Source: RMDB library OK2TST, as collected in RNAgym. This 177-nucleotide RNA was probed chemically with DMS and 2A3. For 2A3, 3,033 sequencing reads were counted.

[RMDB]
RNA sequence: GGGAACGACUCGAGUAGAGUCGAAAACAUGAAGCUUGAUGGCCGCCUGCGUGAACACCUCGACGGCAUACGCAUAGAAGACCUGCCCAAGCCUUUCGUUGCCGUUUGCACUGAACUGCGUACAGGAAAAAUACCUGCUAUUCGUAGCAGGUAUUUUAAAAGAAACAACAACAACAAC
Reactivity to DMS in 0.01 (KOAc 150mM, MgCl2 10mM, bicine 150mM(pH8.5), 24C), signal-to-noise 7, nucleotides 027 to 126: c090a090u000g010a110a110g010c050u000u010g020a100u000g020g010c030c040g000c040c020u010g020c070g010u010g010a080a090c110a090c070c020u010c090g010a080c070g020g020c020a050u010a050c070g010c300a080u010a090g010a070a070g000a040c040c010u010g010c030c020c040a080a160g000c040c020u000u010u000c030g010u000u000g020c010c030g000u000u000u010g020c060a060c070u010g010a070a100c080u000g010c030g020u000a070c110a080g000g010a020
Reactivity to 2A3 in 0.01 (KOAc 150mM, MgCl2 10mM, bicine 150mM(pH8.5), 24C), signal-to-noise 3, nucleotides 027 to 126: c040a080u120g090a090a020g050c060u080u110g070a030u090g130g030c020c020g000c030c020u030g030c000g020u040g050a060a020c030a050c040c010u010c030g060a050c040g020g080c020a050u100a070c030g020c020a040u040a090g110a060a010g020a070c020c020u040g040c030c000c010a020a040g000c000c000u050u080u040c050g040u040u050g020c010c030g020u010u050u080g050c060a030c050u070g030a150a010c050u030g020c030g000u050a020c020a060g000g080a040